[RMDB]
Record summary: Chemical mapping of a 177-nucleotide RNA with DMS. DMS adducts were read by reverse transcription with MarathonRT. Source: RMDB library TTRDES, as collected in RNAgym. The RNA was probed in 150 mM KOAc, 10 mM MgCl2 and 150 mM bicine (pH 8.5) at 24 C. Values cover nucleotides 27 to 126.
RNA sequence: GGGAACGACUCGAGUAGAGUCGAAAAAAAAAAGAUAUGGAAUAUGGGACUUGCCACAGAGGGUCAAUCGGAAACGAUUGACCUACCCACCUGUGGAACUACAAGUUAGUAUUCCUAAGUCAAAAAAGCAUAUAUCAUUGUUCGCAAUGAUAUAUGCAAAAGAAACAACAACAACAAC
Reactivity to DMS in 0.01 (KOAc 150mM, MgCl2 10mM, bicine 150mM(pH8.5), 24C), signal-to-noise 2, nucleotides 027 to 126: a000a020a020a010a020a030g000a000u000a000u000g000g010a040a000u020a000u010g020g000g000a020c000u010u000g030c010c000a020c000a000g000a140g050g010g010u020c000a030a000u010c010g010g010a020a000a030c000g000a010u000u000g010a020c000c000u000a030c040c030c090a300c030c000u000g000u000g000g000a020a000c040u000a300c020a050a020g020u010u000a300g060u010a020u010u010c000c010u000a010a080g020u030c010a000a140a070a040a050a110